[RMDB]
RNA sequence: GGGAACGACUCGAGUAGAGUCGAAAAAAUGGUGCUUGAGAGGCAAAGCAUGUAAAUGUGACGCCACACACUUCGAGGCACAGUAUGUACUUGAUUCACGUCAUUAUAGAACUAUUCUCGAAGAUUGACCUCUGUCAAAAUUCGUUUUGACAGAGGUAAAAGAAACAACAACAACAAC
Reactivity to DMS in 0.01 (KOAc 150mM, MgCl2 10mM, bicine 150mM(pH8.5), 24C), signal-to-noise 7, nucleotides 027 to 126: a070a030u020g010g030u010g010c050u040u020g010a150g010a100g020g000c030a040a200a210g000c020a020u000g000u060a050a090a020u000g000u000g000a300c300g020c010c010a130c100a130c150a110c010u000u000c020g010a020g000g000c210a050c120a040g000u000a050u010g000u000a020c140u000u010g000a010u000u000c270a120c250g000u000c010a020u020u010a010u000a020g000a070a020c010u000a080u040u010c000u000c000g000a010a020g000a110u020u020g010
Reactivity to 2A3 in 0.01 (KOAc 150mM, MgCl2 10mM, bicine 150mM(pH8.5), 24C), signal-to-noise 9, nucleotides 027 to 126: a000a010u210g040g010u050g010c050u140u090g070a130g030a070g220g020c060a080a070a040g020c020a020u080g040u300a080a200a080u060g020u080g020a020c100g000c010c000a020c000a000c000a000c040u000u020c010g010a010g010g000c060a010c020a050g020u010a020u070g030u010a020c130u030u040g020a020u080u200c160a030c150g010u000c010a010u010u060a030u020a060g130a150a010c020u030a050u160u020c000u000c000g020a040a030g040a120u030u230g030
Structure probing data (DMS and 2A3) for a 177-nucleotide construct. The RNA was probed in 150 mM KOAc, 10 mM MgCl2 and 150 mM bicine (pH 8.5) at 24 C. The 2A3 profile rests on 14,229 reads.